An RNA of 177 nucleotides, treated with DMS and 2A3 and read out base by base. Source: RMDB library OK1LIB, as collected in RNAgym. For DMS the reverse transcriptase was MarathonRT. The 2A3 profile rests on 532 reads. Conditions: 150 mM KOAc, 10 mM MgCl2 and 150 mM bicine (pH 8.5), 24 C.

RNA sequence: GGGAACGACUCGAGUAGAGUCGAAAAGAUGAGAAUACGUGACUUGGUCAGAGGCGGAAAGGCACAAGCACGAACGAUGCAGUAGAGUAUCGACCCGCCAACAGAUGCACGUUGUGAUCGUGCUAGAGACUGGAGUACCGUUCGCGGUACUCCAGUCAAAAGAAACAACAACAACAAC
Reactivity to DMS in 0.01 (KOAc 150mM, MgCl2 10mM, bicine 150mM(pH8.5), 24C), signal-to-noise 1, nucleotides 027 to 126: g010a050u000g000a130g000a060a040u020a180c040g040u000g040a040c000u020u000g000g020u000c040a050g000a230g000g000c000g020g000a020a090a100g000g060c060a260c000a050a040g020c000a070c000g000a110a150c040g000a000u000g000c000a020g040u000a060g050a090g000u010a020u010c000g020a120c000c000c000g020c000c000a300a290c280a000g000a160u000g000c040a030c010g000u030u040g010u000g020a040u060c040g030u010g010c030u050a000g000a300
Reactivity to 2A3 in 0.01 (KOAc 150mM, MgCl2 10mM, bicine 150mM(pH8.5), 24C), signal-to-noise 1, nucleotides 027 to 126: g000a070u300g010a010g030a240a030u060a190c020g000u000g050a210c000u000u000g000g000u100c000a030g000a050g100g040c000g020g000a040a100a000g010g000c000a000c000a080a000g050c020a000c000g020a160a000c000g000a000u050g000c010a040g050u230a000g050a030g040u020a110u040c000g000a130c000c000c000g000c040c040a030a000c000a120g010a090u130g000c000a080c060g000u040u170g220u110g090a040u070c010g000u010g020c050u050a050g040a000